[RMDB]
An RNA of 177 nucleotides, treated with DMS and 2A3 and read out base by base. The RNA was probed in 150 mM KOAc, 10 mM MgCl2 and 150 mM bicine (pH 8.5) at 24 C. Source: RMDB libraries RFM100 and RFMREP, as collected in RNAgym. DMS adducts were read by reverse transcription with MarathonRT. Values cover nucleotides 27 to 126. As a SHAPE reagent, 2A3 marks flexible, mostly unpaired nucleotides at the ribose 2'-OH. 2A3 adducts were read by reverse transcription with SuperScript II with manganese.
RNA sequence: GGGAACGACUCGAGUAGAGUCGAAAAAAUCCCCUGAGCCGAUACUAUCACUUUAGGAUAGCGUUCUGCAUAUUUAGAGUGUAUGCCUACCCAGAGUAGGAAACCCAGCAAGUAUGCGUCGCUUCCAAGAGAUAACUUCUUUCGAGAAGUUAUCUCUAAAAGAAACAACAACAACAAC
Reactivity to DMS in 0.01 (KOAc 150mM, MgCl2 10mM, bicine 150mM(pH8.5), 24C), signal-to-noise 4, nucleotides 027 to 126: a080a070u000c020c000c000c100u020g000a070g010c030c050g000a070u010a060c080u010a050u020c120a120c070u020u020u020a100g000g010a050u020a000g000c010g010u020u000c030u040g040c020a000u000a010u000u000u010a160g000a180g020u010g010u000a040u010g010c000c000u000a000c000c010c220a130g010a190g030u000a000g020g000a010a040a010c020c010c020a100g000c210a070a040g010u000a000u000g010c010g010u000c010g000c000u000u000c010c010a130
Reactivity to 2A3 in 0.01 (KOAc 150mM, MgCl2 10mM, bicine 150mM(pH8.5), 24C), signal-to-noise 9, nucleotides 027 to 126: a000a010u080c020c000c000c020u090g070a030g030c030c030g050a040u060a130c050u100a070u200c090a050c110u090u090u190a050g010g010a060u120a060g000c000g060u120u030c070u200g010c010a000u020a010u020u040u050a120g040a040g070u140g020u030a030u250g040c000c000u000a010c000c020c060a070g030a070g060u000a000g000g000a010a000a000c030c010c010a030g070c050a050a020g010u000a000u000g000c000g010u000c000g000c000u010u000c000c000a000